[RMDB]
RNA sequence: GGGAACGACUCGAGUAGAGUCGAAAACGGUGCUUCGGCACCGAAAAAACUGAUCCAUGAGAGUAGGAACCCCAUCAUACGGGAAUUUCGAAAUCAUGGGUUUUUUGAAAAGCGUGGUUCGCCACGCGAUUUACACCUACUUCGGUAGGUGUAAAUCAAAAGAAACAACAACAACAAC
Reactivity to DMS in 0.01 (KOAc 150mM, MgCl2 10mM, bicine 150mM(pH8.5), 24C), signal-to-noise 4, nucleotides 027 to 126: c020g030g000u000g000c000u000u000c180g030g040c000a010c000c000g010a000a050a050a080a030a040c140u010g010a010u000c000c010a010u000g000a030g010a090g000u000a090g000g000a000a040c100c000c000c000a090u010c300a140u010a170c240g010g000g000a060a260u000u000u000c000g000a150a140a090u000c000a000u000g000g010g010u000u000u000u000u000u010g000a060a020a080a150g010c000g020u000g000g000u000u010c170g030c020c000a000c000g010c010
Reactivity to 2A3 in 0.01 (KOAc 150mM, MgCl2 10mM, bicine 150mM(pH8.5), 24C), signal-to-noise 3, nucleotides 027 to 126: c000g000g000u010g000c010u060u100c210g120g000c010a000c000c010g040a030a010a000a000a000a010c060u050g010a000u010c000c000a000u000g000a000g000a000g020u000a010g000g030a020a020c030c000c020c000a050u100c020a050u090a080c070g000g010g050a050a140u000u010u020c000g000a000a010a000u000c000a000u000g010g000g000u010u000u010u000u030u070g100a050a040a000a000g000c000g000u010g000g030u050u090c150g040c050c000a000c010g000c000
Chemical mapping of a 177-nucleotide RNA with DMS and 2A3. The RNA was probed in 150 mM KOAc, 10 mM MgCl2 and 150 mM bicine (pH 8.5) at 24 C. It was measured as part of the RMDB library RFMREP. For DMS the reverse transcriptase was MarathonRT.